[RMDB]
RNA sequence: GGGAACGACUCGAGUAGAGUCGAAAAUUGCAGGCCGUCGUCGUUUGCGCGCACGAAGAGUCCGCGGGCACCGGCAUCUUCGCUGUUGGCGGGCAGUGUGCCUAGGAUGAGGUCUUGGCCUUUGCGCCUACACAAAUCCUUUCGAGGAUUUGUGUAGAAAAGAAACAACAACAACAAC
Reactivity to DMS in 0.01 (KOAc 150mM, MgCl2 10mM, bicine 150mM(pH8.5), 24C), signal-to-noise 8, nucleotides 027 to 126: u010u010g010c060a070g010g010c010c010g000u000c020g020u000c010g030u010u000u000g010c250g030c020g020c110a030c010g010a090a110g000a170g010u000c000c000g020c070g010g000g010c020a040c130c020g000g010c280a090u010c110u000u010c030g010c150u000g010u000u000g010g020c020g010g010g030c020a080g010u000g020u000g010c010c020u000a150g010g010a020u000g000a180g000g000u010c030u000u010g010g010c010c030u010u010u010g010c060g010c130
Reactivity to 2A3 in 0.01 (KOAc 150mM, MgCl2 10mM, bicine 150mM(pH8.5), 24C), signal-to-noise 5, nucleotides 027 to 126: u110u140g030c020a010g010g000c020c010g140u070c010g020u010c010g050u050u100u110g060c070g000c000g000c010a010c020g060a110a050g080a030g090u000c000c000g000c070g000g030g000c010a010c020c020g060g000c030a070u070c080u300u140c030g000c010u060g050u150u070g190g000c000g000g010g000c030a040g010u030g000u010g070c010c000u020a040g030g040a010u030g020a010g050g000u030c020u070u110g030g020c010c000u060u050u110g030c060g030c000

The record gives the reactivity of an RNA of 177 nucleotides to DMS and 2A3. Source: RMDB library OK2TST, as collected in RNAgym. The RNA was probed in 150 mM KOAc, 10 mM MgCl2 and 150 mM bicine (pH 8.5) at 24 C.